[RMDB]
RNA sequence: GGGAACGACUCGAGUAGAGUCGAAAACACCAGAUGUUCGCAUCUGGUGAAAUACUCAAAAGCCGAAAGAGAAGGGCAAACACACGGCAGUGAAAGCCGAAAAAACUAGCCGGUUCGCCGGCUAGAAGACAGUAUCCUAGUUCGCUAGGAUACUGUCAAAAGAAACAACAACAACAAC
Reactivity to 2A3 in 0.01 (KOAc 150mM, MgCl2 10mM, bicine 150mM(pH8.5), 24C), signal-to-noise 2, nucleotides 027 to 126: c020a000c010c000a030g000a000u020g020u070u070c200g030c130a000u000c000u000g010g010u000g010a000a000a000u080a010c010u030c050a000a000a000a260g010c000c020g200a110a070a000g180a040g070a090a080g080g000g000c050a100a070a010c050a010c000a010c060g020g040c020a020g030u010g270a190a030a030g030c000c010g070a130a040a000a010a000a020c010u010a000g000c000c000g010g010u010u040c150g050c050c000g000g060c010u010a000g000a000a020
Reactivity to DMS in 0.01 (KOAc 150mM, MgCl2 10mM, bicine 150mM(pH8.5), 24C), signal-to-noise 2, nucleotides 027 to 126: c010a020c020c000a010g010a010u000g010u000u010c170g070c000a020u000c000u030g000g000u000g010a000a050a020u000a080c030u010c060a050a020a150a150g050c040c000g000a180a110a050g000a070g010a170a160g000g000g000c070a130a080a140c140a030c100a070c050g000g010c020a050g010u010g010a030a080a130g000c010c000g010a000a030a010a070a100a070c000u000a000g010c000c000g010g050u000u010c140g000c000c000g000g010c000u000a000g020a040a040
Structure probing data (2A3 and DMS) for a 177-nucleotide construct. The 2A3 profile rests on 2,521 reads. In probing experiments dimethyl sulfate is read out at A N1 and C N3, which are open when not base-paired. The RNA was probed in 150 mM KOAc, 10 mM MgCl2 and 150 mM bicine (pH 8.5) at 24 C. As a SHAPE reagent, 2A3 marks flexible, mostly unpaired nucleotides at the ribose 2'-OH.